RNA sequence: GGGAACGACUCGAGUAGAGUCGAAAAUUGAUCAGUCUAAUAUUUUAAACAUAUUAUCUCAAGUUAUUUGUUUGAGUAUAGUAUACUUUGAAGGGUUCCUCAGCUUCACUUUUAACCUAUUUUUUAUUUCUAUUUCCUCUACAGUAGCAUUAUCCUACAUACAUGAGUCGUUCGCGACUCAUGUAUGAAAAGAAACAACAACAACAAC
Reactivity to 2A3 in 0.01 (KOAc 150mM, MgCl2 10mM, bicine 150mM(pH8.5), 24C), signal-to-noise 1, nucleotides 027 to 156: u110u000g050a090u110c000a070g020u000c000u070a100a230u090a300u180u100u060u290a100a070a080c040a000u090a050u000u050a000u060c020u000c020a080a050g090u250u230a240u300u300u300g080u040u070u020g000a000g050u160a000u000a070g000u000a000u000a110c020u080u120u150g050a000a110g030g030g000u010u020c000c000u090c050a020g020c000u130u090c020a070c050u000u100u000u300a040a070c020c020u070a180u190u120u030u120u190u000a130u010u260u000c020u060a060u070u020u090c020c000u090c000u000a090c000a080g120u170a000g000c040a020u170u100a060u160c040c040u060a110

Background:
Chemical mapping of a 207-nucleotide RNA with 2A3. Reactivities are given for positions 27 through 156. The data come from the RNA Mapping Database (RMDB), library OK3TST. The reactions ran in a buffer of 150 mM KOAc, 10 mM MgCl2 and 150 mM bicine (pH 8.5), at 24 C.